[RMDB]
RNA sequence: GGGAACGACUCGAGUAGAGUCGAAAAGAAAUCCGUCAAGAGCAAAGUCGUCUAAGAGUGGCAUCUGCUGAAAACUCUAAAGAUGUCCGAGAGCAACUCGCAGGUAUAGCUCAAGUAUUGGAAGAGGGCCCUAAAACGUAUUCGUACGUUUUAGGGCAAAAGAAACAACAACAACAAC
Reactivity to DMS in 0.01 (KOAc 150mM, MgCl2 10mM, bicine 150mM(pH8.5), 24C), signal-to-noise 2, nucleotides 027 to 126: g010a190a110a050u000c010c030g000u010c060a070a200g000a090g030c040a060a050a100g030u000c030g010u000c010u010a080a120g010a090g010u000g000g010c030a060u020c090u020g040c140u000g010a040a120a090a090c090u010c010u010a030a080a110g020a010u000g000u010c030c100g030a150g000a070g020c110a090a040c040u000c030g010c180a080g020g020u000a060u000a190g000c080u030c000a100a160g010u000a070u000u010g030g000a110a090g000a090g000g010
Reactivity to 2A3 in 0.01 (KOAc 150mM, MgCl2 10mM, bicine 150mM(pH8.5), 24C), signal-to-noise 1, nucleotides 027 to 126: g080a030a080a030u000c000c000g010u020c060a070a030g050a000g050c020a040a040a120g050u110c070g030u060c050u120a060a090g030a020g090u070g000g010c000a030u010c060u080g030c020u000g000a070a070a080a150c070u050c010u050a060a100a000g030a000u050g000u000c010c000g140a070g040a000g150c020a010a130c030u040c040g000c080a040g000g100u100a000u110a060g040c020u020c030a040a010g070u000a030u100u300g050g020a080a000g050a080g040g090
Annotation: An RNA of 177 nucleotides, treated with DMS and 2A3 and read out base by base. Reactivities are given for positions 27 through 126. The DMS profile rests on 797 reads. The RNA was probed in 150 mM KOAc, 10 mM MgCl2 and 150 mM bicine (pH 8.5) at 24 C. Source: RMDB library OK2TRN, as collected in RNAgym. For DMS the reverse transcriptase was MarathonRT.